[RMDB]
RNA sequence: GGGAACGACUCGAGUAGAGUCGAAAAGGUCCUGUCUUCGGACAGGACCAAAUAAACUUGACAAGCGCGUCAAGAAAAAGCGCAAUAUAAAAGAACAAACAAAAACGAGGUCGUUCGCGACCUCGAACAUGAUGUGCAAGUUCGCUUGCACAUCAUGAAAAGAAACAACAACAACAAC
Reactivity to 2A3 in 0.01 (KOAc 150mM, MgCl2 10mM, bicine 150mM(pH8.5), 24C), signal-to-noise 2, nucleotides 027 to 126: g000g000u020c000c000u030g010u000c010u000u050c130g080g000a010c000a010g000g040a020c000c010a000a000a000u020a000a000a010c020u000u000g000a020c080a150a130g040c050g000c010g020u020c020a040a130g120a270a070a040a010a000g000c010g050c050a120a040u160a000u050a140a120a020a050g090a120a040c050a060a070a010c070a040a120a070a010a010c020g000a000g020g000u020c020g020u040u030c050g010c020g060a000c000c000u010c000g000a020a000
Reactivity to DMS in 0.01 (KOAc 150mM, MgCl2 10mM, bicine 150mM(pH8.5), 24C), signal-to-noise 1, nucleotides 027 to 126: g000g020u000c000c000u000g000u010c000u000u020c300g050g000a000c020a000g000g000a000c000c000a000a010a050u000a090a090a100c020u000u000g000a020c110a120a100g010c040g000c060g010u000c020a020a120g020a090a090a050a090a060g010c010g000c010a200a120u050a130u000a090a110a080a010g000a060a120c120a060a020a050c140a000a080a050a080a130c010g010a000g010g000u000c000g030u010u000c170g010c000g000a040c000c000u010c000g000a000a090